[RMDB]
RNA sequence: GGGAACGACUCGAGUAGAGUCGAAAACAAUUUCUCUGCAAAACUUUCAAAAUUUUGUUGAAGAGGUUGCAAAAAUAGUGAACCGGAUGACUGGAUCACACGGUACAGAUCUCUCAUCACUUGAGAACAUGAUUCGUAGAUUCGUCUACGAAUCAUGAAAAGAAACAACAACAACAAC
Reactivity to 2A3 in 0.01 (KOAc 150mM, MgCl2 10mM, bicine 150mM(pH8.5), 24C), signal-to-noise 2, nucleotides 027 to 126: c000a010a000u050u000u020c010u020c000u000g010c020a010a060a130a170c050u180u300u270c050a070a120a110a150u070u070u050u130g020u030u010g030a080a030g020a050g000g050u030u050g030c020a090a070a000a090a020u110a060g030u010g020a070a070c030c050g060g020a070u130g070a090c060u130g060g010a070u040c000a040c020a010c200g030g020u040a010c020a070g090a230u040c050u060c030u020c030a080u050c010a010c050u030u060g040a030g010a100a000
Reactivity to DMS in 0.01 (KOAc 150mM, MgCl2 10mM, bicine 150mM(pH8.5), 24C), signal-to-noise 3, nucleotides 027 to 126: c020a060a090u000u000u000c000u000c020u000g020c010a010a010a040a020c020u000u000u000c150a040a040a120a150u000u010u000u010g010u000u000g010a080a030g000a040g000g010u000u000g000c050a030a090a070a110a090u000a020g010u000g010a070a140c210c170g000g010a070u010g010a030c010u000g000g000a110u000c010a040c280a070c150g000g010u000a050c070a040g000a110u000c020u000c020u010c090a190u000c030a020c040u010u000g010a050g000a080a180